[RMDB]
RNA sequence: GGGAACGACUCGAGUAGAGUCGAAAAUGCGGCGACCGUCCCGCCGACAUCGAGGCACAGCUGCGAUUCAUGGCUGAGCAGGGUGUGGACCUGAUCGUCACCAGCGGCGGCCUGGGGCCGACCGCCGGUUAGCAAGAAGCUUCGGCUUCUUGCUAACAAAAGAAACAACAACAACAAC
Reactivity to 2A3 in 0.01 (KOAc 150mM, MgCl2 10mM, bicine 150mM(pH8.5), 24C), signal-to-noise 2, nucleotides 027 to 126: u130g010c070g040g020c000g000a020c020c060g000u020c010c010c000g000c020c020g080a130c020a060u150c100g140a230g090g120c000a000c010a040g000c030u050g020c060g050a140u180u170c070a100u290g000g000c030u040g030a000g000c010a060g020g040g060u060g030u150g010g090a030c000c050u120g030a210u010c030g030u020c020a040c020c030a000g000c000g010g010c000g000g030c050c100u210g080g000g110g000c050c000g100a230c010c010g000c020c000g070
Reactivity to DMS in 0.01 (KOAc 150mM, MgCl2 10mM, bicine 150mM(pH8.5), 24C), signal-to-noise 1, nucleotides 027 to 126: u020g020c060g000g000c000g020a030c040c070g000u000c070c010c010g030c010c020g020a070c080a030u000c070g020a150g010g000c000a110c040a050g010c020u000g010c100g010a170u000u020c120a040u000g010g040c010u010g000a080g010c010a080g000g020g000u010g010u010g020g000a070c120c150u000g000a040u000c030g010u000c020a070c070c020a070g000c010g010g000c000g000g010c000c010u000g020g000g010g000c020c000g000a080c010c000g020c000c050g010

This 177-nucleotide RNA was probed chemically with 2A3 and DMS. 2A3 adducts were read by reverse transcription with SuperScript II with manganese. For DMS the reverse transcriptase was MarathonRT. It was measured as part of the RMDB library OK2TST. The RNA was probed in 150 mM KOAc, 10 mM MgCl2 and 150 mM bicine (pH 8.5) at 24 C.